The record gives the reactivity of an RNA of 207 nucleotides to 2A3 and DMS.
2A3 adducts were read by reverse transcription with SuperScript II with manganese.
[RMDB]
RNA sequence: GGGAACGACUCGAGUAGAGUCGAAAAGCGUAUUCGUACGCGUAAUGCCGUAGGUGCGUUUGUCAGACUUAUCCAGCCGAAGAACUUCGAAAGAGGGGAGGCUGGGUUUGGUCUUGGAUUUAACGCACCUAAACGGAGACAGGAGGUUCGCCUCCAAGUAGUACACCGGAUUCGUCCGGUGUACUACAAAAGAAACAACAACAACAAC
Reactivity to 2A3 in 0.01 (KOAc 150mM, MgCl2 10mM, bicine 150mM(pH8.5), 24C), signal-to-noise 3, nucleotides 027 to 156: g000c000g000u030a040u060u240c250g040u030a010c010g000c010g000u040a060a100u150g030c020c000g010u010a000g000g000u000g010c000g000u000u010u000g020u030c000a000g000a010c020u000u000a000u050c000c000a000g010c000c010g180a300a050g030a030a070c000u010u000c000g120a170a050a070g010a020g020g000g010g000a000g000g000c000u000g020g020g020u070u030u100g010g010u050c030u020u090g180g000a090u240u290u110a000a000c010g000c000a020c000c000u000a000a000a000c010g000g050a070g070a040c100a080g000g000a000g010g010u100u130c180g180c050c010u000c010c000a000a020
Reactivity to DMS in 0.01 (KOAc 150mM, MgCl2 10mM, bicine 150mM(pH8.5), 24C), signal-to-noise 1, nucleotides 027 to 156: g020c010g040u010a080u000u000c260g030u000a080c000g000c000g020u010a030a150u010g050c000c010g000u000a080g030g030u020g010c020g000u000u000u010g010u020c030a060g030a030c000u020u000a000u000c010c020a030g050c000c000g060a160a290g030a090a180c040u020u010c000g010a180a170a300g000a080g000g010g000g010a130g030g000c010u000g000g000g010u010u000u000g000g030u000c000u000u000g000g000a130u000u010u010a070a030c020g010c030a030c000c000u020a000a010a100c030g050g020a220g010a220c160a080g000g000a060g050g030u000u000c180g020c030c010u000c020c020a040a300

DMS adducts were read by reverse transcription with MarathonRT. Conditions: 150 mM KOAc, 10 mM MgCl2 and 150 mM bicine (pH 8.5), 24 C.